[RMDB]
RNA sequence: GGGAACGACUCGAGUAGAGUCGAAAACAUCAAUGCCAUCCGGGACUACUCCUUCAAGAGGCUGUACCGACUCAAGGUCUUGGAGAUCUCCCACUGGCCCUACUUGGACACCAUGACACCCAACUGCCUCUACGGCCUCAACCUGACGUCCCUGUCAUAAUGCGUAUUACUUCGGUAAUACGCAUUAAAAAGAAACAACAACAACAAC
Reactivity to 2A3 in 0.01 (KOAc 150mM, MgCl2 10mM, bicine 150mM(pH8.5), 24C), signal-to-noise 3, nucleotides 027 to 156: c040a060u150c070a110a140u180g030c000c010a020u060c070c040g050g000g020a020c020u050a020c020u050c010c010u070u060c050a080a020g000a030g120g000c020u030g020u050a110c020c080g090a050c120u030c160a050a040g020g020u000c020u040u020g030g000a060g020a110u040c020u020c050c010c010a010c080u010g070g020c000c020c000u120a110c030u030u070g020g000a040c010a030c060c050a040u090g040a060c050a090c050c020c000a030a110c090u060g010c000c000u020c030u070a040c050g050g010c000c020u030c020a060a090c010c020u080g030a050c060g050u040c020c000c010u030g050u000c000a030
Reactivity to DMS in 0.01 (KOAc 150mM, MgCl2 10mM, bicine 150mM(pH8.5), 24C), signal-to-noise 1, nucleotides 027 to 156: c040a090u000c060a070a090u000g020c020c020a080u000c020c040g000g010g020a070c020u000a120c020u000c030c020u000u010c070a060a130g010a060g020g030c020u010g000u000a210c050c030g000a050c030u030c050a100a090g000g050u000c030u000u000g030g000a090g000a160u010c030u000c000c000c010a100c100u020g000g050c020c100c010u000a070c030u010u000g020g010a090c040a100c010c020a090u020g010a110c050a070c010c020c040a080a070c030u000g010c000c020u010c010u000a120c040g020g000c010c020u000c010a060a090c020c000u030g000a100c050g020u000c000c000c020u000g000u010c100a180
Description:
Conditions: 150 mM KOAc, 10 mM MgCl2 and 150 mM bicine (pH 8.5), 24 C. Chemical mapping of a 207-nucleotide RNA with 2A3 and DMS. Reactivities are given for positions 27 through 156. It was measured as part of the RMDB library OK3TST. For 2A3, 1,905 sequencing reads were counted.